[RMDB]
RNA sequence: GGGAACGACUCGAGUAGAGUCGAAAAUCACAAAGCGGAUUUAGCUCGGUUGGGAGAGGUCCAGACCGAAGAUCUGGUUGUCCUGUGGACGAUCCACAGAAUUCGCACCAUAAACAACGGGAGAUUCGCCUACUAGGUCGUUCGCGACCUAGUAGGCAAAAGAAACAACAACAACAAC
Reactivity to 2A3 in 0.01 (KOAc 150mM, MgCl2 10mM, bicine 150mM(pH8.5), 24C), signal-to-noise 1, nucleotides 027 to 126: u100c000a000c070a100a000a000g130c050g050g000a020u000u030u030a000g000c000u000c000g140g040u030u030g060g070g030a070g000a060g080g000u090c040c070a010g010a000c020c030g060a070a000g000a110u070c000u000g070g030u000u020g030u070c020c000u140g010u060g010g010a110c220g070a150u110c000c000a000c000a000g030a030a030u030u010c010g000c060a080c010c000a040u170a100a100a050c110a040a010c000g020g110g000a130g020a050u050u080c100
Reactivity to DMS in 0.01 (KOAc 150mM, MgCl2 10mM, bicine 150mM(pH8.5), 24C), signal-to-noise 1, nucleotides 027 to 126: u010c000a000c030a000a120a150g000c000g000g000a000u000u000u000a120g000c190u000c000g000g030u000u000g000g000g000a280g000a180g000g000u070c000c010a010g100a180c000c000g040a030a180g040a150u000c040u090g000g000u060u000g000u000c180c060u000g000u030g000g000a300c090g000a000u000c000c000a050c030a000g000a060a000u000u000c030g030c060a300c090c040a150u000a080a080a110c300a070a000c150g000g000g000a150g000a230u000u000c030
The data come from the RNA Mapping Database (RMDB), library OK1LIB. Chemical mapping of a 177-nucleotide RNA with 2A3 and DMS. 2A3 adducts were read by reverse transcription with SuperScript II with manganese.